Source information
Chemical mapping of a 177-nucleotide RNA with 2A3 and DMS. Reactivities are rounded to 0.1 and cut off at 0 and 3.
[RMDB]
RNA sequence: GGGAACGACUCGAGUAGAGUCGAAAAGAUAUGGAGACCCUAAGAGCGAAGAACCCACAUAGGUGUAGACACAUCGGAAACGAUGUGUCCGAAGCCUAUGUGGGGGAGCUUAUGGGUCUCCUAAGUCCCUCUCUACUUAGUUCGCUAAGUAGAGAGGAAAAGAAACAACAACAACAAC
Reactivity to 2A3 in 0.01 (KOAc 150mM, MgCl2 10mM, bicine 150mM(pH8.5), 24C), signal-to-noise 2, nucleotides 027 to 126: g010a000u110a030u210g010g000a000g000a000c060c020c020u140a300a130g070a010g100c010g180a300a070g020a140a080c000c000c000a000c000a000u010a000g080g000u240g120u300a010g020a010c010a000c000a000u000c000g050g000a070a080a020c010g000a000u000g000u010g000u040c000c010g000a040a010g010c000c010u000a000u000g000u010g000g000g000g010g010a000g000c000u020u020a010u090g010g010g010u000c000u000c000c000u000a000a000g000u020c000
Reactivity to DMS in 0.01 (KOAc 150mM, MgCl2 10mM, bicine 150mM(pH8.5), 24C), signal-to-noise 3, nucleotides 027 to 126: g010a100u000a300u020g010g000a040g010a020c000c000c000u000a140a220g010a010g010c000g000a110a220g020a210a300c010c000c000a010c000a010u000a000g020g020u000g010u010a150g000a040c000a020c010a010u000c000g020g000a090a070a210c010g020a000u010g010u000g010u010c040c040g010a150a300g000c010c000u010a000u000g010u010g000g000g000g020g010a070g050c000u000u010a300u010g000g000g010u000c010u000c000c010u000a000a080g010u000c030